The record gives the reactivity of an RNA of 177 nucleotides to 2A3.
RNA sequence: GGGAACGACUCGAGUAGAGUCGAAAAGUAUGACACUAUCCUGACCAUGUCUGCCCUUGGCGUCGAUGUUUGUGUCAUUCGCCACCCAGAAGUGGAUUAUUACAAAGAGCUAGUGGAAAGUCCAACCCGGUAUGACUGCCUUCGGGCAGUCAUACCGAAAAGAAACAACAACAACAAC
Reactivity to 2A3 in 0.01 (KOAc 150mM, MgCl2 10mM, bicine 150mM(pH8.5), 24C), signal-to-noise 2, nucleotides 027 to 126: g030u010a010u050g010a020c010a050c010u000a050u090c000c070u090g070a170c030c010a070u090g110u150c030u120g090c000c030c010u100u090g100g050c090g070u100c070g050a070u150g070u050u170u000g050u000g070u000c000a000u000u010c000g080c000c010a140c020c010c010a080g020a120a060g120u160g050g030a130u040u070a020u090u110a080c100a020a110a020g300a070g030c010u130a010g090u030g000g080a070a030a000g000u000c000c070a010a010c100c030

It was measured as part of the RMDB library OK1LIB. Reactivities are given for positions 27 through 126.